Structure probing data (2A3) for a 177-nucleotide construct. The reactions ran in a buffer of 150 mM KOAc, 10 mM MgCl2 and 150 mM bicine (pH 8.5), at 24 C. It was measured as part of the RMDB library RFM100.

[RMDB]
RNA sequence: GGGAACGACUCGAGUAGAGUCGAAAACCGUCGCGGGCAGUGUCUAGCCAGGCCUUGACAAGCUAGCCGGAGGAGCGCCUAGGAACCCGAGCCGGAGCUCAGCGAGCGCAGCCUGCACGCCCGCCUCCAUGUCCAGGCGUUUCGACGCCUGGACAUGAAAAGAAACAACAACAACAAC
Reactivity to 2A3 in 0.01 (KOAc 150mM, MgCl2 10mM, bicine 150mM(pH8.5), 24C), signal-to-noise 1, nucleotides 027 to 126: c020c010g030u050c070g000c010g000g000g020c040a140g060u000g010u130c070u060a030g030c030c090a160g040g000c000c040u100u050g000a120c020a040a000g010c000u090a050g080c000c000g070g020a080g000g020a040g050c020g060c000c060u050a060g010g080a050a040c000c020c030g000a010g060c010c020g000g010a000g010c020u070c130a020g020c000g050a000g000c120g000c070a030g000c010c000u020g000c000a000c000g030c000c000c000g020c000c000u010c010